Notes
Structure probing data (2A3 and DMS) for a 177-nucleotide construct.
RNA sequence: GGGAACGACUCGAGUAGAGUCGAAAAUAGGCAUUGGCCUUUUGCCAGCAGACAACGCAGUGCUCACGUCCAUAAAUGGGAAUGGCCGGCCAAGGAGCUCGAGCCAGUGAGUCCCUAACUGGGACCACCUAGUCUCUGUUUUCGAACAGAGACUAGGAAAAGAAACAACAACAACAAC
Reactivity to 2A3 in 0.01 (KOAc 150mM, MgCl2 10mM, bicine 150mM(pH8.5), 24C), signal-to-noise 4, nucleotides 027 to 126: u090a020g030g000c040a050u040u160g170g040c010c000u040u030u040u070g030c010c020a010g030c010a010g020a070c040a100a020c060g010c050a030g040u030g070c010u020c010a070c050g030u000c020c010a050u130a170a190a060u130g040g000g010a030a120u030g010g000c000c010g000g010c010c010a040a120g140g020a070g000c060u090c140g030a030g020c000c010a010g040u030g050a040g030u020c000c000c010u010a100a040c120u090g010g000g010a000c010c010a010
Reactivity to DMS in 0.01 (KOAc 150mM, MgCl2 10mM, bicine 150mM(pH8.5), 24C), signal-to-noise 5, nucleotides 027 to 126: u010a050g010g010c020a160u020u010g030g000c010c030u000u000u000u000g000c020c020a090g010c130a040g010a060c090a060a130c100g020c060a040g030u000g010c050u000c030a090c100g010u010c030c030a080u000a060a120a100u010g000g000g000a090a100u000g010g020c040c040g010g000c000c020a130a130g000g000a120g020c030u010c050g020a110g000c020c020a060g000u000g010a110g000u000c000c000c000u010a100a080c220u010g000g000g000a030c020c070a110
The DMS profile rests on 4,683 reads. For 2A3, 6,026 sequencing reads were counted. 2A3 adducts were read by reverse transcription with SuperScript II with manganese.